[RMDB]
RNA sequence: GGGAACGACUCGAGUAGAGUCGAAAAUGAUGACGAAUCGCUUGUGCUUACUGAAUCGCUCAUCGAUUGUGAGCCACUCAAUGAACUUGACUCGCUUACACUUUCUGAUUUUCUUAAUGACGUUGAGCUUCCCAGGAAUGUUCGCAUUCCUGGGAAGAAAAGAAACAACAACAACAAC
Reactivity to DMS in 0.01 (KOAc 150mM, MgCl2 10mM, bicine 150mM(pH8.5), 24C), signal-to-noise 2, nucleotides 027 to 126: u020g010a000u000g010a090c040g010a070a050u000c020g020c140u010u000g030u010g050c100u010u020a070c100u010g020a090a020u000c110g010c150u000c070a010u000c080g020a070u000u010g000u010g000a050g000c010c080a080c180u020c000a020a010u010g000a140a260c110u000u000g000a030c060u000c300g030c020u010u000a070c020a080c160u000u000u000c050u000g010a070u000u010u000u000c060u010u000a080a100u010g020a080c130g030u010u000g000a080g020
Reactivity to 2A3 in 0.01 (KOAc 150mM, MgCl2 10mM, bicine 150mM(pH8.5), 24C), signal-to-noise 2, nucleotides 027 to 126: u130g030a020u010g050a020c030g030a010a080u000c060g000c060u030u060g030u040g100c140u100u130a120c020u120g100a070a020u040c010g030c040u040c080a000u040c020g050a050u020u030g010u000g030a010g000c020c010a000c010u030c020a020a160u120g060a080a040c040u000u040g020a010c010u020c020g030c050u010u030a010c050a010c000u070u150u080c070u100g120a140u000u030u120u100c080u050u160a140a100u140g030a020c070g060u050u060g040a020g000

Structure probing data (DMS and 2A3) for a 177-nucleotide construct. Conditions: 150 mM KOAc, 10 mM MgCl2 and 150 mM bicine (pH 8.5), 24 C. For 2A3 the reverse transcriptase was SuperScript II with manganese. The 2A3 profile rests on 1,161 reads. Values cover nucleotides 27 to 126.